[RMDB]
RNA sequence: GGGAACGACUCGAGUAGAGUCGAAAAAGUGGAGUCUUGCUGACGGGCUGGACCCGUAUGACCCCCAAAACUGGCUGUUCCACCCGGCAGUUGGUCACACAAUCACUUUGGAGGAUCUUGCCGACGACGACCAUUAGAUGUUCGCAUCUAAUGGUCGAAAAGAAACAACAACAACAAC
Reactivity to DMS in 0.01 (KOAc 150mM, MgCl2 10mM, bicine 150mM(pH8.5), 24C), signal-to-noise 2, nucleotides 027 to 126: a080g030u000g020g000a150g000u000c010u000u000g010c040u010g000a020c030g000g000g020c230u000g000g030a100c020c040c000g010u000a070u000g020a300c030c000c000c000c020a080a050a110a040c080u010g000g000c300u000g000u000u000c010c020a080c050c010c010g000g030c010a010g030u010u000g000g000u010c080a140c070a060c060a040a120u010c120a040c050u010u030u010g000g010a110g000g010a080u000c040u000u000g020c050c020g010a130c120g000a210
Reactivity to 2A3 in 0.01 (KOAc 150mM, MgCl2 10mM, bicine 150mM(pH8.5), 24C), signal-to-noise 1, nucleotides 027 to 126: a000g050u040g010g030a170g010u000c020u040u060g030c050u030g030a000c010g050g000g000c140u050g000g050a110c020c010c010g000u030a170u180g220a230c020c000c020c030c020a070a050a020a040c110u120g000g050c050u040g060u130u000c020c010a000c000c000c000g000g000c000a010g010u050u060g000g000u030c000a010c000a010c020a090a050u160c020a020c110u040u070u070g020g020a040g000g020a020u010c040u030u080g000c010c020g040a040c030g040a020
Chemical mapping of a 177-nucleotide RNA with DMS and 2A3. In probing experiments dimethyl sulfate is read out at A N1 and C N3, which are open when not base-paired. DMS adducts were read by reverse transcription with MarathonRT. For 2A3, 1,611 sequencing reads were counted. It was measured as part of the RMDB library OK2TRN.